[RMDB]
RNA sequence: GGGAACGACUCGAGUAGAGUCGAAAAGAUAUGGAAUGGAAAAGAGCUCGAUAAGCUCGCUCGGAAACGAGGAGCUUUUGACGAGCUGACAUUCCUAAGUCAAAAUCUCGGUCUUCGGACCGAGAAACACAGAAUAUACGUUCGCGUAUAUUCUGUGAAAAGAAACAACAACAACAAC
Reactivity to DMS in 0.01 (KOAc 150mM, MgCl2 10mM, bicine 150mM(pH8.5), 24C), signal-to-noise 7, nucleotides 027 to 126: g000a040u010a300u010g000g000a010a000u000g000g010a120a090a140a170g010a070g010c000u000c010g010a140u010a020a020g010c000u000c000g010c010u010c000g010g000a080a070a120c000g000a010g010g000a010g010c010u000u000u000u010g010a140c100g000a000g010c000u000g000a100c000a010u000u000c000c000u000a040a170g000u000c020a100a090a130a140u000c000u000c000g000g010u000c000u000u010c200g020g000a010c000c000g000a000g000a010a060a160
Reactivity to 2A3 in 0.01 (KOAc 150mM, MgCl2 10mM, bicine 150mM(pH8.5), 24C), signal-to-noise 5, nucleotides 027 to 126: g020a000u060a020u120g000g010a010a010u010g020g160a070a160a210a250g270a180g010c010u020c060g130a160u030a110a000g000c010u000c130g220c070u000c000g010g020a050a050a040c010g000a000g010g000a010g000c000u060u050u050u090g250a150c080g000a010g000c010u000g000a000c000a000u000u010c000c000u010a100a010g050u020c020a010a060a190a290u020c010u000c000g010g000u000c000u020u060c300g110g000a000c000c000g010a000g000a000a010a000
An RNA of 177 nucleotides, treated with DMS and 2A3 and read out base by base. For DMS the reverse transcriptase was MarathonRT. The reactions ran in a buffer of 150 mM KOAc, 10 mM MgCl2 and 150 mM bicine (pH 8.5), at 24 C. High 2A3 reactivity points to a flexible backbone, as in loops and unpaired stretches.